An RNA of 177 nucleotides, treated with DMS and 2A3 and read out base by base. The reactions ran in a buffer of 150 mM KOAc, 10 mM MgCl2 and 150 mM bicine (pH 8.5), at 24 C.

RNA sequence: GGGAACGACUCGAGUAGAGUCGAAAAACUCAGGCCAACUGGCAUAGCAAGUAAAACUGUACUGAUCUAAAUGAAAAAUGUUUCUCUUCCUAAUAAUCGCAGGUCCUUCAAUGGACAUUAUCUGCCAUCAGGGGAGUGAAUUCGUUCACUCCCCUGAAAAAGAAACAACAACAACAAC
Reactivity to DMS in 0.01 (KOAc 150mM, MgCl2 10mM, bicine 150mM(pH8.5), 24C), signal-to-noise 2, nucleotides 027 to 126: a060c030u020c010a080g020g010c000c000a220a040c160u030g040g000c020a050u040a110g020c030a050a080g000u000a040a050a050a150c040u000g020u040a140c070u040g000a090u020c060u000a090a070a100u020g000a050a060a060a060a070u020g000u000u000u020c000u000c020u040u000c040c010u000a020a070u030a050a130u020c240g000c000a030g030g000u010c020c000u000u030c290a030a030u040g020g030a000c000a050u040u020a110u000c020u000g000c050c210a130
Reactivity to 2A3 in 0.01 (KOAc 150mM, MgCl2 10mM, bicine 150mM(pH8.5), 24C), signal-to-noise 2, nucleotides 027 to 126: a000c020u020c020a050g030g020c000c000a070a060c150u090g030g000c000a160u260a000g070c080a020a130g040u060a040a000a000a040c010u060g020u140a000c080u040g090a050u060c010u190a070a160a070u120g260a030a030a030a030a030u120g050u000u000u000c000u000c000u000u050c000c050u070a090a090u120a120a000u160c040g000c010a000g030g030u000c040c000u090u100c070a140a160u100g010g020a000c000a000u010u060a080u000c020u010g000c010c020a060
For 2A3, 658 sequencing reads were counted. Source: RMDB libraries RFM100 and RFMREP, as collected in RNAgym.